[RMDB]
RNA sequence: GGGAACGACUCGAGUAGAGUCGAAAACGAAAGUUGACCCUUCGCGGAUGCGCCUGAUGGAGCGCUGGCUGGGCCAGAUGAAGGAGAAGGGAUUUGACCUGAAGGCGUAUCAGGAGAGCGUGGUGCCUAACGUCACGUUCUUCGGAACGUGACGUUAAAAAGAAACAACAACAACAAC
Reactivity to DMS in 0.01 (KOAc 150mM, MgCl2 10mM, bicine 150mM(pH8.5), 24C), signal-to-noise 2, nucleotides 027 to 126: c000g010a110a070a040g000u000u000g010a150c030c010c000u000u010c010g030c140g000g000a010u000g000c000g010c020c020u010g000a300u010g050g020a250g000c010g000c000u000g000g020c030u020g010g030g010c000c000a000g000a020u010g010a110a140g050g000a230g000a080a030g000g030g010a210u000u010u020g010a190c000c010u030g010a300a080g030g020c000g010u000a020u010c010a200g000g000a060g000a020g010c010g000u000g010g050u010g000c050c100
Reactivity to 2A3 in 0.01 (KOAc 150mM, MgCl2 10mM, bicine 150mM(pH8.5), 24C), signal-to-noise 2, nucleotides 027 to 126: c020g000a000a000a000g020u140u140g070a260c000c000c040u180u100c020g000c060g110g030a000u000g000c000g030c050c010u030g000a040u030g060g000a100g110c000g000c010u000g010g000c070u150g070g230g030c000c000a000g030a080u280g130a130a080g130g070a170g010a100a000g210g040g000a180u060u040u200g130a020c050c000u010g030a100a020g000g010c000g000u000a010u000c000a000g030g040a110g010a080g110c030g070u020g060g000u060g070c000c010
An RNA of 177 nucleotides, treated with DMS and 2A3 and read out base by base.
For DMS, 3,110 sequencing reads were counted.
2A3 adducts were read by reverse transcription with SuperScript II with manganese.
It was measured as part of the RMDB library OK1LIB.